[RMDB]
RNA sequence: GGGAACGACUCGAGUAGAGUCGAAAACACAGCCACACUGUCUGGGCAGACCUGAAUAAAAUCCUGACUUUCAUUAACAAAGAAGUUGGGUGGGUCGGACCACUGUGGGCUGCCACAGGGUGCUCCAUGCCCCGAGAGUUGUCACAUGGACAAAAGACAUAGGAGGAGUAUUCGUACUCCUCCUAUGAAAAGAAACAACAACAACAAC
Reactivity to DMS in 0.01 (KOAc 150mM, MgCl2 10mM, bicine 150mM(pH8.5), 24C), signal-to-noise 2, nucleotides 027 to 156: c090a050c000a120g040c000c010a070c010a050c020u000g000u010c040u000g040g020g030c010a100g000a020c030c020u000g040a200a250u030a090a140a120a110u000c000c000u000g020a030c020u000u000u000c070a200u020u000a140a250c190a160a160a140g000a010a020g010u010u000g040g030g010u000g020g030g020u000c030g000g030a080c000c000a010c030u020g020u000g010g000g020c070u000g010c000c010a070c000a030g020g050g000u000g020c050u000c070c050a180u020g020c000c000c020c000g080a100g000a170g020u000u000g000u000c030a080c070a170u000g010g060a100c050a080a070a110a190g000a280
Reactivity to 2A3 in 0.01 (KOAc 150mM, MgCl2 10mM, bicine 150mM(pH8.5), 24C), signal-to-noise 2, nucleotides 027 to 156: c090a000c010a010g020c010c000a250c000a010c070u080g050u200c050u030g030g010g040c020a020g020a000c010c000u020g170a200a080u160a200a180a030a010u100c010c000u010g010a020c020u070u100u090c080a070u100u250a250a040c050a110a120a100g050a000a000g020u000u010g000g000g000u080g000g030g000u020c000g030g150a020c010c000a020c020u020g010u030g000g010g010c020u050g040c000c000a030c020a000g000g000g020u050g030c020u020c030c000a020u020g020c000c000c020c030g050a060g000a000g150u070u200g050u050c060a050c000a140u030g020g000a020c050a040a100a020a010g070a040